[RMDB]
RNA sequence: GGGAACGACUCGAGUAGAGUCGAAAAAUUCAUUCUGCCUCAUUCUUACUGUCGACGAUGUCUUCAUUGAGUUAAUGAGGGCCAAACACACCACUGAUAAUCGCUUCAAGUCUACUGUCUCCUCAAGGCCCUGACAUUAAUUCGUUAAUGUCAGGGCAAAAGAAACAACAACAACAAC
Reactivity to DMS in 0.01 (KOAc 150mM, MgCl2 10mM, bicine 150mM(pH8.5), 24C), signal-to-noise 2, nucleotides 027 to 126: a090u030u000c060a150u030u010c050u000g000c040c060u000c020a060u000u000c000u000u010a020c150u010g000u000c040g000a080c040g020a130u010g000u010c010u000u010c010a000u010u010g010a060g000u020u010a000a000u030g000a080g000g000g020c000c080a030a120a060c050a040c010a040c010c000a010c030u000g000a050u010a050a030u000c080g050c030u020u000c060a010a040g000u000c070u020a070c110u010g000u000c060u000c020c000u020c040a130a070g000
Reactivity to 2A3 in 0.01 (KOAc 150mM, MgCl2 10mM, bicine 150mM(pH8.5), 24C), signal-to-noise 7, nucleotides 027 to 126: a000u100u080c060a030u070u010c030u060g070c000c000u020c010a040u070u040c020u030u050a040c010u030g020u070c020g010a040c030g170a120u220g030u020c000u020u010c020a030u020u080g100a060g090u070u260a040a010u030g010a040g000g000g000c000c000a050a140a010c030a010c000a010c020c010a030c010u010g020a070u050a140a030u040c030g020c060u050u040c040a080a050g030u020c030u040a030c030u060g030u020c020u000c030c000u040c040a060a030g130